The data come from the RNA Mapping Database (RMDB), library ARCHII. Chemical mapping of a 207-nucleotide RNA with DMS and 2A3. The 2A3 profile rests on 1,584 reads.
[RMDB]
RNA sequence: GGGAACGACUCGAGUAGAGUCGAAAAUACCUCAUACCAUAUCUUCGUACUUCAUUACUAGAUAUACGUAGGUAGAUUUAGUGCGGAAGUAACGAACAGGGUACUGCGUGAGGCCGGUUACGGAGCAACGAAAACCUGUCUACGAUGAUAGACCUGGCUGAAACAAAUUCUUCGGAAUUUGUUUCAGAAAAGAAACAACAACAACAAC
Reactivity to DMS in 0.01 (KOAc 150mM, MgCl2 10mM, bicine 150mM(pH8.5), 24C), signal-to-noise 1, nucleotides 027 to 156: u000a120c010c000u010c040a150u010a080c010c060a110u000a060u010c000u010u000c010g040u000a020c050u000u010c000a130u000u010a040c030u000a020g030a030u000a070u000a000c010g040u000a110g010g000u000a030g000a030u000u000u000a040g060u020g020c210g050g000a080a100g000u010a040a060c000g050a040a060c120a170g030g000g050u000a020c080u000g000c070g020u010g000a040g010g100c020c040g040g010u020u010a300c110g040g010a170g030c120a120a120c040g010a060a060a120a070c040c000u000g020u000c010u000a040c040g010a170u000g000a230u010a080g010a130c040c090u000g040g020
Reactivity to 2A3 in 0.01 (KOAc 150mM, MgCl2 10mM, bicine 150mM(pH8.5), 24C), signal-to-noise 3, nucleotides 027 to 156: u120a020c010c010u090c040a120u130a140c050c030a140u080a100u270c060u040u010c010g010u010a000c000u000u020c000a040u010u080a010c000u000a000g010a010u020a030u010a060c050g170u170a100g300g000u010a000g010a020u000u000u000a010g000u010g040c070g060g010a010a020g020u010a150a090c010g000a020a040c020a050g070g000g000u050a100c040u060g030c010g020u060g180a030g000g000c010c010g020g000u020u020a020c020g050g110a130g090c100a140a040c040g050a070a070a040a050c000c000u000g000u000c010u000a010c010g120a080u150g070a110u040a060g090a090c010c030u040g050g000

Background: For DMS the reverse transcriptase was MarathonRT.